This 177-nucleotide RNA was probed chemically with DMS. For DMS the reverse transcriptase was MarathonRT. The RNA was probed in 150 mM KOAc, 10 mM MgCl2 and 150 mM bicine (pH 8.5) at 24 C. High DMS reactivity at an A or C suggests that its Watson-Crick edge is free. The DMS profile rests on 591 reads.

RNA sequence: GGGAACGACUCGAGUAGAGUCGAAAAUCAUGGCAGGGAGGAUGAAGGGAAACCGCUUGAUCCAAUGCAGGCGUUCACAGUAUUUGACAACGGGGCCUUCAUGGAGAGCUUGCGCCCCUCAGACAGCGAGGACUCCAAAAUUCGUUUUGGAGUCCUCAAAAGAAACAACAACAACAAC
Reactivity to DMS in 0.01 (KOAc 150mM, MgCl2 10mM, bicine 150mM(pH8.5), 24C), signal-to-noise 1, nucleotides 027 to 126: u030c040a100u000g000g050c030a060g000g010g030a090g020g020a060u020g000a100a030g030g000g000a060a110a070c120c060g040c070u000u000g000a140u000c010c100a120a030u000g010c110a080g020g000c110g020u020u020c150a080c100a140g010u000a080u020u000u020g010a030c060a030a100c140g030g010g000g000c020c000u010u000c070a060u000g000g000a100g020a060g010c080u000u000g010c140g000c060c010c000c040u000c080a030g000a130c210a090g000c220